Structure probing data (DMS and 2A3) for a 307-nucleotide construct. For DMS the reverse transcriptase was MarathonRT. DMS (dimethyl sulfate) methylates the pairing face of unpaired adenines and cytosines. The data come from the RNA Mapping Database (RMDB), library POS240.
RNA sequence: GGGAACGACUCGAGUAGAGUCGAAAAGCGUUGCGUGAGCAACGCAAGAUCGAGCUUCGGCUCGAUCACCGACUACGUGAGUAGUCGGAAGCUCCUCUUCGGAGGAGCAGCUCCACUUCGGUGGAGCACUUAUUCGUACGCGAAUAAGAAAGAUAUCUGUACCGUCUUCUCCCCGACGGUUUCAAUCCAUAGCUUCACGUUGUGUAGCGUAGGUGGAAGGUAUCGUGUGGUGUAUAAACACCACAUAGUCUCUUAGGGGAGACCAUACGCCACAGUUCGCUGUGGCGAAAAGAAACAACAACAACAAC
Reactivity to DMS in 0.01 (KOAc 150mM, MgCl2 10mM, bicine 150mM(pH8.5), 24C), signal-to-noise 3, nucleotides 027 to 266: g020c000g020u010u000g000c010g030u040g000a240g010c010a000a000c000g020c010a030a040g010a010u010c000g000a000g020c000u000u020c230g030g000c000u010c010g000a000u010c000a100c000c010g010a020c030u000a010c000g020u010g000a240g000u000a000g000u000c000g010g000a170a090g010c000u000c010c000u000c020u000u010c170g000g000a010g010g010a000g020c000a010g000c000u000c000c000a000c000u010u010c200g000g020u010g000g000a020g010c010a010c000u000u000a000u000u000c010g030u000a110c240g030c030g000a010a010u000a010a010g010a200a130a110g010a010u000a020u000c010u000g010u010a020c010c000g000u000c000u010u020c030u000c000c000c000c060g000a010c000g010g000u000u000u000c030a280a290u010c010c000a010u000a130g000c020u010u010c020a020c010g010u020u020g000u000g020u010a000g010c010g030u010a050g000g010u000g000g000a030a020g000g030u000a010u000c010g010u000g010u000g000g010u000g000u010a140u040a120a100a090c010a000c000c000a000c000a000u010a060g000u010c110u010c140u010u010a100g020g000g000g010a030g010a010c300c190a050u000a100
Reactivity to 2A3 in 0.01 (KOAc 150mM, MgCl2 10mM, bicine 150mM(pH8.5), 24C), signal-to-noise 9, nucleotides 027 to 266: g000c000g000u000u010g000c030g050u190g070a120g030c000a000a000c000g000c000a000a020g000a000u000c000g010a000g010c020u090u180c300g130g000c000u010c000g000a000u000c000a010c000c000g000a000c000u000a000c010g120u100g140a100g020u010a000g000u000c000g000g000a010a020g000c000u000c000c010u020c010u030u060c230g120g000a000g000g000a000g000c000a000g000c010u000c000c000a000c000u050u070c210g090g000u000g000g000a000g000c000a000c000u000u000a000u000u000c000g010u020a040c290g020c010g110a000a010u010a000a010g090a100a130a000g010a010u010a010u020c020u030g110u190a010c000c000g010u000c020u210u010c000u050c000c000c000c000g000a000c000g000g000u000u020u020c000a010a010u000c000c010a040u040a130g000c010u050u060c020a030c070g300u300u300g010u110g020u040a020g040c040g100u110a080g300g080u010g010g010a010a000g000g000u010a000u010c020g010u000g000u000g000g030u010g050u030a140u150a300a280a030c010a030c010c000a000c000a000u000a020g070u030c040u020c080u300u180a040g000g000g000g000a000g000a000c000c000a050u130a100